[RMDB]
RNA sequence: GGGAACGACUCGAGUAGAGUCGAAAAGAAGACGUGACGAAAAGUCACGAAAAUAAAGUGCGAAAUAAAUUAGGAAACUAAACUGCAAAGCACAAGCAGAAAAGGUAACGGAGACGUUACCAAAAGAGGAUCGUGGUAUAUUCGUAUACCACGAUCCAAAAGAAACAACAACAACAAC
Reactivity to DMS in 0.01 (KOAc 150mM, MgCl2 10mM, bicine 150mM(pH8.5), 24C), signal-to-noise 2, nucleotides 027 to 126: g010a300a110g040a160c050g000u000g030a010c000g000a100a100a220a100g030u000c000a000c000g020a030a000a060a030u030a030a210a060g010u000g000c090g000a120a070a120u070a060a110a080u000u000a050g000g000a000a160a210c080u000a040a060a060c080u000g020c000a030a110a100g000c000a000c000a000a150g020c050a030g000a200a100a090a170g030g000u000a000a000c000g020g020a260g000a130c000g000u000u000a000c020c000a000a080a030a180g010a300
Reactivity to 2A3 in 0.01 (KOAc 150mM, MgCl2 10mM, bicine 150mM(pH8.5), 24C), signal-to-noise 2, nucleotides 027 to 126: g150a070a000g110a020c000g010u010g000a000c010g090a010a000a160a170g000u000c000a000c000g010a010a030a000a000u130a020a070a020g020u000g000c010g090a190a130a020u210a030a090a030u170u070a040g040g050a080a020a050c080u120a070a110a100c020u010g020c030a060a060a010g010c000a000c000a040a010g000c020a010g050a050a060a060a010g000g000u000a010a020c040g010g010a020g030a030c010g010u000u000a000c000c010a010a000a000a040g040a000

The record gives the reactivity of an RNA of 177 nucleotides to DMS and 2A3. It was measured as part of the RMDB library OK1LIB. For DMS, 1,492 sequencing reads were counted.